The record gives the reactivity of an RNA of 177 nucleotides to 2A3 and DMS.
RNA sequence: GGGAACGACUCGAGUAGAGUCGAAAAAGGAGUAGGGAGAGACCGAAGCGAGGAGGAAAGCAAAGAAAGCAACGGGGCUAGCAGGUGGGUGUUCCGCCCCCCGAGAGGGGACGAGUGAGGCUUAUCCGGUUAGUAUAUUGUUCGCAAUAUACUAACCAAAAGAAACAACAACAACAAC
Reactivity to 2A3 in 0.01 (KOAc 150mM, MgCl2 10mM, bicine 150mM(pH8.5), 24C), signal-to-noise 3, nucleotides 027 to 126: a000g090g010a010g020u120a080g050g020g020a080g010a000g010a040c020c040g030a050a010g050c030g010a050g030g050a010g000g000a120a040a010g040c020a060a040a100g090a060a110a010g010c010a000a070c050g010g000g030g010c010u030a010g040c010a020g000g040u050g040g030g030u080g040u140u040c030c010g030c000c010c000c000c000c010g080a050g020a040g110g010g000g000a010c030g000a010g000u060g010a040g000g020c010u090u060a050u140c030c040
Reactivity to DMS in 0.01 (KOAc 150mM, MgCl2 10mM, bicine 150mM(pH8.5), 24C), signal-to-noise 5, nucleotides 027 to 126: a080g000g010a080g010u010a080g020g010g010a060g010a090g010a080c070c040g020a090a080g020c090g000a090g020g010a080g010g010a050a060a080g010c100a060a080a080g010a070a080a090g000c050a070a110c100g020g000g000g010c080u000a040g020c100a070g010g020u010g010g000g010u000g010u010u000c040c030g000c030c020c000c010c010c020g000a100g000a130g020g000g000g010a030c030g000a060g020u010g010a080g000g000c050u000u010a050u000c090c080

Overview: Conditions: 150 mM KOAc, 10 mM MgCl2 and 150 mM bicine (pH 8.5), 24 C. The DMS profile rests on 4,739 reads. DMS adducts were read by reverse transcription with MarathonRT. Values cover nucleotides 27 to 126. Values are in units of 0.01, from 0 to 300, in steps of 10.